[RMDB]
RNA sequence: GGGAACGACUCGAGUAGAGUCGAAAAGAUAUGGAGACCCAACUUUUGACGUCACCCAAUCGGAAACGAUUGGCGUGACGAUAAGUUGCUCCUAAGUCAAACGUGGGAGGCUUCGGCCUCCCACGAAGUUGUUUAAGUUGUUCGCAACUUAAACAACAAAAGAAACAACAACAACAAC
Reactivity to 2A3 in 0.01 (KOAc 150mM, MgCl2 10mM, bicine 150mM(pH8.5), 24C), signal-to-noise 2, nucleotides 027 to 126: g030a010u090a020u140g000g020a030g010a050c070c120c070a000a000c010u070u070u090u180g300a110c050g000u010c000a000c000c000c000a010a000u010c000g020g000a030a050a040c010g010a000u000u010g030g030c090g000u000g000a000c000g010a000u000a000a010g000u000u010g020c010u000c000c010u010a150a040g050u090c040a000a060a150c020g000u000g030g050g000a000g020g000c020u100u130c300g070g010c000c000u000c020c020c000a000c000g010a000a000
Reactivity to DMS in 0.01 (KOAc 150mM, MgCl2 10mM, bicine 150mM(pH8.5), 24C), signal-to-noise 3, nucleotides 027 to 126: g000a040u000a300u000g000g010a040g010a280c140c300c040a030a020c000u000u000u000u010g020a170c080g000u000c000a000c010c000c000a000a010u000c000g000g010a080a080a160c000g000a000u010u000g000g000c250g040u000g000a000c000g030a010u000a000a010g010u010u000g020c020u020c000c000u000a040a150g010u000c040a080a090a240c030g040u000g000g000g010a030g000g010c010u000u020c240g010g010c000c000u000c000c000c000a000c000g000a010a060